Chemical mapping of a 177-nucleotide RNA with 2A3 and DMS. Conditions: 150 mM KOAc, 10 mM MgCl2 and 150 mM bicine (pH 8.5), 24 C. Values cover nucleotides 27 to 126. The 2A3 profile rests on 2,106 reads.
RNA sequence: GGGAACGACUCGAGUAGAGUCGAAAAGCGGUAAUUGCCUGUGCUGCACUGGUGGUCUUCGCCGGAGCCCUCGAGUUCAGCGAUUGCGGAUCGAAGACGGGCAAGUUCACCCGGGUGGCCAUCGAGGCGGAUGCAUCAGUUUCGACUGAUGCAUCCGAAAAGAAACAACAACAACAAC
Reactivity to 2A3 in 0.01 (KOAc 150mM, MgCl2 10mM, bicine 150mM(pH8.5), 24C), signal-to-noise 2, nucleotides 027 to 126: g040c040g010g060u090a100a100u100u040g050c010c010u030g040u090g040c020u020g000c010a030c060u030g000g000u020g000g010u000c000u070u050c090g050c050c010g030g010a010g020c000c010c000u000c000g050a070g050u040u020c050a070g020c000g100a110u110u300g020c000g040g000a010u040c020g020a020a000g120a020c120g000g010g000c060a080a020g080u070u130c050a050c000c000c020g000g000g000u010g010g010c000c010a000u010c010g030a070g080g000
Reactivity to DMS in 0.01 (KOAc 150mM, MgCl2 10mM, bicine 150mM(pH8.5), 24C), signal-to-noise 2, nucleotides 027 to 126: g020c050g000g000u010a090a070u050u000g010c020c000u000g080u070g030c010u010g000c030a090c030u000g000g020u000g020g010u060c020u020u010c060g010c010c040g040g010a130g030c020c000c020u000c000g000a070g000u010u000c000a060g080c040g020a220u030u010g010c010g000g000a050u000c000g000a060a110g010a090c180g030g000g010c020a110a120g000u010u050c190a160c240c010c000g000g000g000u000g020g020c020c000a060u010c010g000a030g000g010